RNA sequence: GGGAACGACUCGAGUAGAGUCGAAAACAUUUCGGGAGCGUUGCAAAAGAUAAAAUUAACACAUGGCGUGAUCAAAGAUCAAUUGCAAAGCAAAAAUGGAUAUGCCGGACAAUUUUUGUACUCUACAUUUCUAAACACAGCCUCUUUUUACGCUAACUAACAGUCGAGUAUUCGUACUCGACUGUUAAAAAGAAACAACAACAACAAC
Reactivity to 2A3 in 0.01 (KOAc 150mM, MgCl2 10mM, bicine 150mM(pH8.5), 24C), signal-to-noise 2, nucleotides 027 to 156: c030a040u020u050u050c040g010g000g000a080g010c010g000u030u040g000c030a000a040a020a000g010a010u070a070a070a050a040u150u150a180a040c080a010c020a080u150g220g000c040g030u040g000a100u090c050a060a120a020g010a070u010c010a000a060u040u010g020c000a000a020a060g000c030a000a040a080a000a040u080g090g010a060u060a040u130g070c000c000g040g000a000c030a070a020u000u060u000u070u140g010u080a030c000u000c000u040a020c020a040u060u150u080c090u170a110a040a050c030a000c020a050g000c010c000u020c000u070u080u040u050u120a020c030g010c030u030a050a060c030
Reactivity to DMS in 0.01 (KOAc 150mM, MgCl2 10mM, bicine 150mM(pH8.5), 24C), signal-to-noise 1, nucleotides 027 to 156: c050a130u000u000u000c000g050g000g020a160g120c050g000u010u000g020c010a010a050a070a300g000a140u000a050a050a010a080u000u010a070a050c040a130c040a100u000g030g020c040g050u000g000a040u000c020a050a070a180g000a070u000c030a040a300u020u000g020c020a030a090a130g000c000a020a030a070a060a170u000g020g010a160u000a100u000g000c040c200g000g020a050c080a040a080u010u010u000u000u000g010u000a050c060u010c020u010a020c010a130u000u000u000c050u000a010a020a040c020a090c070a080g020c010c020u010c010u000u010u010u000u000a090c080g000c080u020a110a120c150

Chemical mapping of a 207-nucleotide RNA with 2A3 and DMS. The reactions ran in a buffer of 150 mM KOAc, 10 mM MgCl2 and 150 mM bicine (pH 8.5), at 24 C. The 2A3 profile rests on 819 reads. For DMS, 1,667 sequencing reads were counted. For DMS the reverse transcriptase was MarathonRT.